[RMDB]
RNA sequence: GGGAACGACUCGAGUAGAGUCGAAAACGUCUUAGACAAUUCUUUCCAAGUAUUUCUUUUGUGUUUUUUAACCUAUAAAAGAUAAUGGAAUGUUUUAUAGACUGGAUUUUAUCUCAUCCCCUUUCCCCAUGAAACGUAAGUUCGCUUACGUUUCAUGAAAAGAAACAACAACAACAAC
Reactivity to DMS in 0.01 (KOAc 150mM, MgCl2 10mM, bicine 150mM(pH8.5), 24C), signal-to-noise 2, nucleotides 027 to 126: c170g000u000c000u000u000a100g010a080c090a080a120u000u010c070u000u000u000c010c020a040a170g010u010a040u020u010u010c010u010u010u000u000g010u000g000u000u000u000u050u000u020a030a040c050c070u010a080u000a020a010a010a020g000a010u000a090a080u000g000g000a040a030u000g000u000u000u010u000a120u000a030g000a030c020u010g030g010a140u010u000u000u020a060u010c040u010c040a170u010c030c010c010c030u000u000u010c000c010c010
Reactivity to 2A3 in 0.01 (KOAc 150mM, MgCl2 10mM, bicine 150mM(pH8.5), 24C), signal-to-noise 2, nucleotides 027 to 126: c010g000u000c010u060u110a060g030a110c040a040a190u130u110c030u040u060u000c000c020a010a080g090u010a140u020u160u020c010u030u000u050u020g050u000g020u010u030u010u010u050u280a050a030c010c000u100a060u130a300a030a010a000g010a010u040a110a010u050g000g020a020a020u010g020u000u060u020u070a100u010a020g000a000c000u020g020g040a070u080u120u070u200a110u090c130u010c040a090u050c040c000c000c060u000u030u000c010c000c000